[RMDB]
RNA sequence: GGGAACGACUCGAGUAGAGUCGAAAACAAAAUAAAUUUUCGCCGCUGAGGCAUGCGCGUGCGCUCUGUCAGCAUGCCGAGCAGCGGGCGGAACGCACGCUCGUUCCCAACUCUACUCGAGAAAAAAGUAUAGCUAUGAGUUCGCUCAUAGCUAUACAAAAGAAACAACAACAACAAC
Reactivity to 2A3 in 0.01 (KOAc 150mM, MgCl2 10mM, bicine 150mM(pH8.5), 24C), signal-to-noise 3, nucleotides 027 to 126: c020a010a150a080a130u260a070a080a070u070u070u060u080c050g000c010c010g030c080u110g070a040g030g000c020a010u050g000c030g010c010g030u110g030c040g010c070u080c080u170g060u050c000a010g000c030a100u020g000c020c060g090a110g040c000a010g010c000g000g000g000c000g000g000a000a000c010g000c030a080c080g020c050u030c030g000u000u000c020c000c000a010a000c000u000c000u010a000c000u020c000g010a010g020a060a020a010a010a010a000
Reactivity to DMS in 0.01 (KOAc 150mM, MgCl2 10mM, bicine 150mM(pH8.5), 24C), signal-to-noise 3, nucleotides 027 to 126: c070a050a090a100a100u020a050a030a200u010u000u000u000c030g000c050c020g030c040u000g000a180g000g000c020a010u000g000c070g010c130g040u000g030c050g010c070u000c100u000g000u000c030a170g010c000a020u000g000c000c030g010a150g000c010a030g010c000g020g010g020c070g000g020a010a010c030g030c060a060c080g000c120u010c000g000u000u000c000c000c000a170a050c000u000c000u000a010c000u000c000g010a020g000a000a050a050a080a060a100
This 177-nucleotide RNA was probed chemically with 2A3 and DMS. DMS adducts were read by reverse transcription with MarathonRT. High DMS reactivity at an A or C suggests that its Watson-Crick edge is free. For 2A3, 3,994 sequencing reads were counted. Conditions: 150 mM KOAc, 10 mM MgCl2 and 150 mM bicine (pH 8.5), 24 C.